[RMDB]
RNA sequence: GGGAACGACUCGAGUAGAGUCGAAAAUGUUGCGUAUCGAUCGUUGCUGUCAUUAUCGGAUGGGAAAGCAUGCACGAUUGCGUACGGAAACCAUCCGCAUUCAGUUGCCAUGAUCAUUGGCCAUCCGAAACGUACGUAACCCCAUCCGAAACGUACGCUCGUAGGGGGAAUUCGUUCCCCCUACGAGAAAAGAAACAACAACAACAAC
Reactivity to 2A3 in 0.01 (KOAc 150mM, MgCl2 10mM, bicine 150mM(pH8.5), 24C), signal-to-noise 1, nucleotides 027 to 156: u220g010u010u070g090c020g020u050a030u120c130g070a010u070c010g030u070u050g080c010u080g000u160c000a220u050u260a070u220c020g000g010a000u000g000g000g090a000a000a300g050c060a060u080g000c010a000c050g070a180u030u070g000c030g000u000a020c020g010g030a070a000a040c040c050a060u110c000c000g030c010a020u090u120c010a020g070u130u080g030c020c000a050u050g010a140u300c100a130u100u140g090g030c040c020a040u020c000c000g040a100a000a000c020g000u000a000c010g000u000a000a040c000c000c020c000a000u060c030c000g000a000a040a060c050g050u120a000c020g000